[RMDB]
RNA sequence: GGGAACGACUCGAGUAGAGUCGAAAAGCCACCCGGCGUACGGCGUCGAUACCGGCCAUAAACGUCGGAAACUUGAUUGACCUACGCAGGACACCACCGGCGCGCUGCCAGCCGUUGAGGUCGUGCACAUACUAAGACGUUUCGACGUCUUAGUAUGAAAAGAAACAACAACAACAAC
Reactivity to 2A3 in 0.01 (KOAc 150mM, MgCl2 10mM, bicine 150mM(pH8.5), 24C), signal-to-noise 9, nucleotides 027 to 126: g040c010c010a060c040c010c000g010g000c000g000u030a040c120g020g030c040g070u100c020g040a020u100a160c070c060g040g020c010c000a090u190a120a300a010c020g000u010c000g000g010a060a030a020c050u080u080g060a080u120u180g090a120c010c010u060a040c110g000c020a020g040g050a010c010a030c020c000a010c010c000g000g000c010g000c040g030c040u110g070c040c030a020g000c010c010g010u010u030g030a030g010g030u020c030g150u040g000c010a010
Reactivity to DMS in 0.01 (KOAc 150mM, MgCl2 10mM, bicine 150mM(pH8.5), 24C), signal-to-noise 9, nucleotides 027 to 126: g010c040c080a170c190c010c010g010g000c000g010u000a090c180g010g010c030g010u000c070g010a140u010a120c130c030g000g010c030c060a150u000a070a130a060c110g010u000c010g010g000a050a100a080c070u000u000g000a120u000u010g010a150c020c020u000a050c130g010c020a040g000g000a050c030a050c020c020a040c050c010g000g010c010g010c100g010c080u000g000c050c040a170g010c010c010g000u000u000g000a100g010g010u000c030g000u000g010c060a300